[RMDB]
RNA sequence: GGGAACGACUCGAGUAGAGUCGAAAAACAUAUUACGAUAUGAUUCAGAUGGUGUCUUACUGGUUCGUACCAAGGGACAUCAUGGUUUCUUGUUUCCAACCAAAGAACAAGUGGCGAGCCUGAAUAAAAAACUGACUGCCGUUCGCGGCAGUCAGAACUGUAGAGUGUCCUUCGGGACACUCUACAGAAAAGAAACAACAACAACAAC
Reactivity to 2A3 in 0.01 (KOAc 150mM, MgCl2 10mM, bicine 150mM(pH8.5), 24C), signal-to-noise 1, nucleotides 027 to 156: a000c040a040u100a050u130u140a060c040g120a040u020a020u120g110a040u060u090c040a070g040a170u050g020g000u020g010u000c000u010u110a120c040u020g000g060u150u290c180g080u200a090c000c000a000a020g050g000g000a000c000a000u010c000a000u000g020g000u020u000u000c000u000u000g050u070u100u040c010c020a080a090c010c000a070a230a030g020a010a060c030a000a000g020u000g070g000c030g010a040g070c020c030u040g090a060a010u130a120a110a040a030a060a030c000u000g000a010c000u000g030c040c000g040u020u070c170g020c000g160g020c000a000g000u010c000a000g000a000a000